RNA sequence: GGGAACGACUCGAGUAGAGUCGAAAAGAUAUGGAGAUGUUAGCGCUGUAAGUAUGUCGGAAACGACAUAUUGAGGAACUACGCUGGACAUCUCCUAAGUCAAAAGUGAUAGCUUCGGCUAUCACAAUCUACACGUAGUCUUCGGACUACGUGUAGAAAAAGAAACAACAACAACAAC
Reactivity to 2A3 in 0.01 (KOAc 150mM, MgCl2 10mM, bicine 150mM(pH8.5), 24C), signal-to-noise 2, nucleotides 027 to 126: g030a010u030a020u080g000g020a020g010a010u000g020u000u020a020g000c160g000c250u110g060u140a000a030g010u010a000u010g010u000c000g030g020a030a020a010c010g000a010c010a000u000a000u030u000g050a050g110g040a170a110c190u270a080c280g000c000u040g020g060a010c000a020u000c010u000c000c000u000a010a000g010u020c020a070a000a170a000g020u010g010a000u010a010g000c000u060u060c300g090g000c000u020a010u020c010a000c000a010a020
Reactivity to DMS in 0.01 (KOAc 150mM, MgCl2 10mM, bicine 150mM(pH8.5), 24C), signal-to-noise 3, nucleotides 027 to 126: g010a000u000a270u000g000g000a000g000a010u000g010u000u000a010g000c010g010c030u000g010u010a140a080g000u010a000u000g020u000c000g000g000a080a060a130c010g010a010c010a000u000a000u000u000g000a140g020g000a050a120c160u020a110c010g010c000u010g030g020a000c000a010u000c000u000c000c000u000a010a050g010u000c010a040a100a100a100g000u000g010a010u000a000g000c000u000u010c280g020g000c000u000a000u000c000a000c010a040a070
The record gives the reactivity of an RNA of 177 nucleotides to 2A3 and DMS. Reactivities are given for positions 27 through 126. DMS adducts were read by reverse transcription with MarathonRT. 2A3 adducts were read by reverse transcription with SuperScript II with manganese.